An RNA of 177 nucleotides, treated with DMS and read out base by base.

RNA sequence: GGGAACGACUCGAGUAGAGUCGAAAAGAUAUGGAUACACACACCCACCGCUCGUGGCUCGAUAAGCUCCACUCGGAAACGAGUGUGAGCUUUUGACGAGCGGCGUGGGUGUGUGUAUCCUAAGUCAGUCACCUACUACGUUCGCGUAGUAGGUGACAAAAGAAACAACAACAACAAC
Reactivity to DMS in 0.01 (KOAc 150mM, MgCl2 10mM, bicine 150mM(pH8.5), 24C), signal-to-noise 1, nucleotides 027 to 126: g030a050u000a300u020g000g010a040u000a030c000a030c000a000c010a000c000c000c000a080c030c020g000c000u010c030g060u000g030g020c230u000c140g000a120u000a000a010g000c000u000c000c000a000c000u010c000g020g000a110a100a150c000g010a010g000u000g030u030g000a010g000c000u000u000u000u000g020a060c000g030a050g010c010g020g020c300g030u020g000g100g020u000g000u000g010u000g020u000a000u000c010c000u000a040a080g010u000c010a100

Background:
It was measured as part of the RMDB library TTRINS.